[RMDB]
RNA sequence: GGGAACGACUCGAGUAGAGUCGAAAAUCUGCCACUUGUGGUCCAUGCUGUGUCCCCUCUGGAUGAGUUGUCCUUUGCUUUGUCUCAAACAUCUGUCCCUGUUUGGAGUGGCGGAAACUCAGAUGUGUGAGUAACCUGUAUUCGUACAGGUUACUCAAAAAGAAACAACAACAACAAC
Reactivity to DMS in 0.01 (KOAc 150mM, MgCl2 10mM, bicine 150mM(pH8.5), 24C), signal-to-noise 5, nucleotides 027 to 126: u000c030u000g010c010c010a020c030u000u000g030u000g010g010u000c030c030a060u000g010c040u000g010u000g000u000c020c020c020c050u000c050u000g010g010a110u010g000a090g000u000u010g010u000c020c020u000u010u000g020c070u000u000u000g020u000c030u000c050a060a080a060c040a020u000c050u000g000u000c010c010c010u010g010u000u000u000g010g000a040g020u000g000g000c040g000g000a030a060a070c100u000c010a040g000a070u010g010u010g010
Reactivity to 2A3 in 0.01 (KOAc 150mM, MgCl2 10mM, bicine 150mM(pH8.5), 24C), signal-to-noise 1, nucleotides 027 to 126: u000c000u000g000c000c000a010c050u050u060g060u070g130g020u020c030c000a060u110g000c020u110g000u080g100u040c020c010c060c000u000c050u020g060g040a110u080g040a050g110u040u120g110u090c050c000u070u050u020g040c060u010u050u090g080u000c020u000c060a080a110a040c000a070u060c010u080g040u130c000c000c000u050g080u060u050u100g030g040a020g020u020g000g000c060g000g060a020a010a010c030u000c040a040g060a240u100g090u060g030